[RMDB]
RNA sequence: GGGAACGACUCGAGUAGAGUCGAAAACAGACACACUUCAUUGCAGCCUUUUAUUGGCUAUUUGGAAAGGAAGCAAGGGGUACAGUGGGGGCGCACACAGGCCUGGAGUCUGGUUCAUUCUCCAGAAACGGGGUAAGAUGUUCGCAUCUUACCCCGUAAAAGAAACAACAACAACAAC
Reactivity to DMS in 0.01 (KOAc 150mM, MgCl2 10mM, bicine 150mM(pH8.5), 24C), signal-to-noise 1, nucleotides 027 to 126: c040a050g040a060c130a060c180a120c020u040u000c000a090u020u020g000c070a010g010c010c000u000u000u000u030a060u060u000g000g000c050u000a000u000u010u080g000g020a060a020a120g000g050a030a070g000c020a060a010g000g000g000g000u020a050c130a170g000u000g000g000g000g000g000c080g030c010a010c070a020c120a090g000g000c170c000u000g000g000a040g000u000c050u000g030g000u000u060c110a010u010u000c040u010c030c010a080g030a030a150
Reactivity to 2A3 in 0.01 (KOAc 150mM, MgCl2 10mM, bicine 150mM(pH8.5), 24C), signal-to-noise 2, nucleotides 027 to 126: c030a000g170a060c050a000c000a000c080u020u040c060a180u040u180g020c040a020g000c020c000u220u120u200u150a210u160u180g020g050c010u070a050u090u100u060g000g080a020a080a060g000g010a000a010g020c050a030a100g030g000g000g010u120a070c030a010g000u120g000g000g000g000g000c050g000c000a050c000a000c020a000g010g050c000c000u020g000g000a000g030u000c000u000g020g020u030u000c020a000u040u040c010u000c010c000a000g030a020a090